[RMDB]
Chemical mapping of a 207-nucleotide RNA with DMS and 2A3. Reactivities are given for positions 27 through 156. The 2A3 profile rests on 2,267 reads.

RNA sequence: GGGAACGACUCGAGUAGAGUCGAAAAAUGUAUGAACAUCAUGGAAUCUAUACCGGCAAACACGAUAAAAUAUCUUAACUUUCCUCAGAGAUCCACUGUCACUGGAAAGAUGAUAGAUGACUAUCUAACUCGUAAAAAAACCUAUAAUGAUCAUAUAGUCACAUAAGUACUUCGGUACUUAUGUGACAAAAGAAACAACAACAACAAC
Reactivity to DMS in 0.01 (KOAc 150mM, MgCl2 10mM, bicine 150mM(pH8.5), 24C), signal-to-noise 1, nucleotides 027 to 156: a090u000g010u000a020u010g000a120a040c010a110u010c000a050u000g000g000a110a280u000c010u000a220u010a020c000c030g000g010c040a110a080a180c190a090c060g020a090u000a000a010a130a090u000a020u000c000u000u000a090a160c020u010u000u000c000c010u010c110a140g010a150g010a110u000c040c150a060c210u000g000u000c010a190c020u000g090g020a030a000a070g010a090u000g000a110u000a010g040a090u000g000a180c090u000a020u000c010u000a150a120c040u020c050g000u020a030a000a000a010a080a200a130c060c040u000a020u000a040a050u000g000a070u000c010a010u010a020u000a090
Reactivity to 2A3 in 0.01 (KOAc 150mM, MgCl2 10mM, bicine 150mM(pH8.5), 24C), signal-to-noise 2, nucleotides 027 to 156: a010u100g010u040a050u030g020a050a010c000a040u060c010a030u090g020g040a030a010u000c030u100a100u080a100c020c040g090g010c060a060a130a010c080a030c120g010a010u070a050a100a010a030u100a010u020c030u040u060a030a090c010u020u020u000c010c000u040c020a000g010a020g010a190u060c110c060a060c100u060g010u080c030a020c130u060g000g020a050a040a000g040a070u060g010a000u010a050g080a040u040g040a060c040u020a030u030c000u000a010a030c020u000c090g030u060a000a000a000a000a200a000a080c020c010u050a060u040a160a060u040g020a020u020c030a010u030a010u020a120
Background:
Conditions: 150 mM KOAc, 10 mM MgCl2 and 150 mM bicine (pH 8.5), 24 C. It was measured as part of the RMDB library OK3TST.